[RMDB]
RNA sequence: GGGAACGACUCGAGUAGAGUCGAAAAGUGGAUAGUUUCGACUAUCCACACAACAGAUGAUCUUACAGUGGAGGAUGAAGAAGAUGGCCAUCGGAUCCUCAAAUAGCACAGAGUUCGCUCUGUGCAACUAUAUUUCUCUAUUCGUAGAGAAAUAUAGAAAAGAAACAACAACAACAAC
Reactivity to DMS in 0.01 (KOAc 150mM, MgCl2 10mM, bicine 150mM(pH8.5), 24C), signal-to-noise 6, nucleotides 027 to 126: g030u000g000g000a010u000a000g010u000u010u010c160g010a030c000u000a010u000c000c000a010c010a030c120a050a070c100a080g010a090u000g010a120u000c040u000u010a110c120a100g020u010g010g000a050g010g010a050u010g010a100a110g010a080a090g000a060u000g010g010c050c030a070u000c030g000g000a090u000c010c010u000c060a060a080a080u010a100g010c000a010c000a010g010a030g020u000u000c210g010c010u000c000u000g020u000g010c010a020a040
Reactivity to 2A3 in 0.01 (KOAc 150mM, MgCl2 10mM, bicine 150mM(pH8.5), 24C), signal-to-noise 9, nucleotides 027 to 126: g010u000g000g000a000u010a000g000u020u070u130c200g040a020c000u000a000u000c000c000a000c000a000c000a000a010c010a000g120a090u130g020a030u060c040u070u190a090c060a100g070u130g130g040a020g040g010a040u070g060a090a110g030a050a020g040a090u100g080g030c030c010a020u030c020g040g030a020u010c010c000u030c020a040a060a080u110a010g000c000a000c000a000g020a000g010u050u070c150g050c060u000c000u000g000u000g000c000a000a000